[RMDB]
RNA sequence: GGGAACGACUCGAGUAGAGUCGAAAACGGGUACGAGGCAAUGCUUAAGAACUAAGUUGAGCAUUAAGAUACCCAAUAGACGACCUUAAAUAGAUGAUUAGUUCUUCAUCUAUGCCUCGUUGUCUAGGGUACUGUUAGAUUUCGAUCUGGCAGUACCAAAAGAAACAACAACAACAAC
Reactivity to 2A3 in 0.01 (KOAc 150mM, MgCl2 10mM, bicine 150mM(pH8.5), 24C), signal-to-noise 5, nucleotides 027 to 126: c150g040g050g060u210a030c070g020a040g050g060c080a010a060u070g030c030u070u070a060a040g080a150a110c130u130a070a070g080u030u020g000a000g010c000a000u000u000a010a000g000a010u090a040c000c000c000a010a010u060a020g040a000c060g050a050c000c010u050u090a040a040a020u030a010g030a010u030g030a010u100u050a060g200u170u050c020u070u000c000a010u010c000u010a060u080g020c020c020u040c090g000u040u050g020u020c050u060a090g300
The data come from the RNA Mapping Database (RMDB), library OK1LIB. Structure probing data (2A3) for a 177-nucleotide construct. The 2A3 profile rests on 2,614 reads. For 2A3 the reverse transcriptase was SuperScript II with manganese. The reactions ran in a buffer of 150 mM KOAc, 10 mM MgCl2 and 150 mM bicine (pH 8.5), at 24 C.